An RNA of 207 nucleotides, treated with 2A3 and read out base by base. It was measured as part of the RMDB library RNAMAK. Reactivities are rounded to 0.1 and cut off at 0 and 3. For 2A3 the reverse transcriptase was SuperScript II with manganese. The reactions ran in a buffer of 150 mM KOAc, 10 mM MgCl2 and 150 mM bicine (pH 8.5), at 24 C. The 2A3 profile rests on 919 reads.
RNA sequence: GGGAACGACUCGAGUAGAGUCGAAAACAUCUGUGUUCGCACAGAUGAAAGCGUACUACGCUUGAGGGAUAUGGAGAUGAUCUUCCCAAAUAGGAAGAGCAUCUAUGAAGUAUCCUACCCACCAAGCGUAUCGCAAAUGACAGGGUUCGCCCUGUCAGAUCUCGAUUUCGUUCGCGAAAUCGAGAUCAAAAGAAACAACAACAACAAC
Reactivity to 2A3 in 0.01 (KOAc 150mM, MgCl2 10mM, bicine 150mM(pH8.5), 24C), signal-to-noise 1, nucleotides 027 to 156: c000a010u010c000u000g010u000g030u140u170c190g070c080a000c000a000g010a000u020g050a070a020a020g000c000g010u070a080c040u000a000c000g000c020u000u020g000a030g010g000g000a000u000a000u030g050g000a030g000a000u000g010a010u000c020u000u040c010c020c000a130a250a190u300a090g000g000a000a000g000a010g000c010a000u030c000u000a300u080g060a000a000g010u000a000u000c000c000u010a000c050c060c010a010c020c000a010a000g000c000g000u010a010u300c000g000c010a010a060a060u150g000a000c000a000g000g000g040u040u120c230g040c030c010c000u010g000u000c000a000
Description:
Values cover nucleotides 27 to 156.